[RMDB]
RNA sequence: GGGAACGACUCGAGUAGAGUCGAAAAACGUCGUAGCUACGGCUACGACGACCUGGUCAAGGAUGAAACCUAAUCUGAGUGGACAUCUCCGGAUGAUAAAUGCGGAUAUGGGACUGAGACCAGCUAAGUGUUACCAUACUUUCGAGUAUGGUAACACAAAAGAAACAACAACAACAAC
Reactivity to DMS in 0.01 (KOAc 150mM, MgCl2 10mM, bicine 150mM(pH8.5), 24C), signal-to-noise 4, nucleotides 027 to 126: a140c010g020u000c000g010u000a020g020c010u010a230c190g010g010c000u000a000c000g000a000c000g020a020c140c000u010g000g000u000c010a080a300g000g000a080u020g010a110a200a110c000c000u010a090a030u010c050u000g030a160g000u000g030g040a210c000a020u000c020u000c220c120g000g010a000u000g010a050u030a170a090a040u020g000c010g010g000a020u000a140u000g000g020g000a100c020u000g000a300g000a000c010c000a010g000c100u010a100a180
Reactivity to 2A3 in 0.01 (KOAc 150mM, MgCl2 10mM, bicine 150mM(pH8.5), 24C), signal-to-noise 7, nucleotides 027 to 126: a000c010g010u000c000g000u000a000g000c010u030a040c260g120g000c000u000a000c000g010a000c000g010a000c000c000u000g000g010u000c010a020a020g060g010a070u200g190a090a110a090c010c000u030a050a020u000c010u030g030a030g050u070g010g060a020c000a010u010c010u000c060c200g100g000a010u030g000a010u080a230a070a010u100g070c060g000g000a020u020a130u160g050g000g030a020c000u010g020a020g000a050c000c000a000g010c010u170a210a030